This 207-nucleotide RNA was probed chemically with 2A3 and DMS. It was measured as part of the RMDB library OK3TST. The RNA was probed in 150 mM KOAc, 10 mM MgCl2 and 150 mM bicine (pH 8.5) at 24 C.
[RMDB]
RNA sequence: GGGAACGACUCGAGUAGAGUCGAAAAACAAAAGUGAUGACCCAUCACGGCCAACUCUCAGGUCGCGAAUAUUGAACCGGUUGAUGUCCGAAAACAUGACAAGUUUGGACUGGCAAAUCGAGCACGUGGUACAGGCAUCAUCCAGACUAACCUGCUCCCCAAUUCUAUUAUUCGUAAUAGAAUUGGGAAAAGAAACAACAACAACAAC
Reactivity to 2A3 in 0.01 (KOAc 150mM, MgCl2 10mM, bicine 150mM(pH8.5), 24C), signal-to-noise 6, nucleotides 027 to 156: a000c080a000a110a030a010g040u040g030a030u050g090a120c000c010c030a010u030c010a010c020g020g000c020c020a080a060c070u080c030u070c160a040g000g030u030c020g010c030g100a130a040u170a140u140u180g030a080a040c030c030g030g020u030u040g040a050u090g040u000c000c010g090a070a050a030a020c040a050u140g100a050c050a130a110g010u030u060u050g030g020a050c040u020g040g010c050a040a040a080u090c050g020a040g050c050a030c170g030u040g020g000u080a070c040a080g000g000c010a020u020c000a000u030c050c020a030g060a060c020u030a050a060c020c030u060g000c020u100c010
Reactivity to DMS in 0.01 (KOAc 150mM, MgCl2 10mM, bicine 150mM(pH8.5), 24C), signal-to-noise 3, nucleotides 027 to 156: a140c060a110a060a080a090g020u000g000a100u000g000a180c030c000c010a180u010c020a040c000g020g030c000c000a050a120c070u000c050u000c060a110g030g030u000c020g010c020g000a110a120u000a140u000u000g010a110a080c030c020g000g040u000u010g010a090u000g010u000c020c010g010a100a050a070a050c030a060u000g020a080c060a050a070g020u000u000u000g020g020a100c030u000g010g010c050a020a060a080u000c040g000a090g000c050a130c060g030u010g030g000u000a090c090a050g000g000c030a090u000c000a080u000c020c010a110g000a090c060u010a090a100c040c010u000g020c090u010c060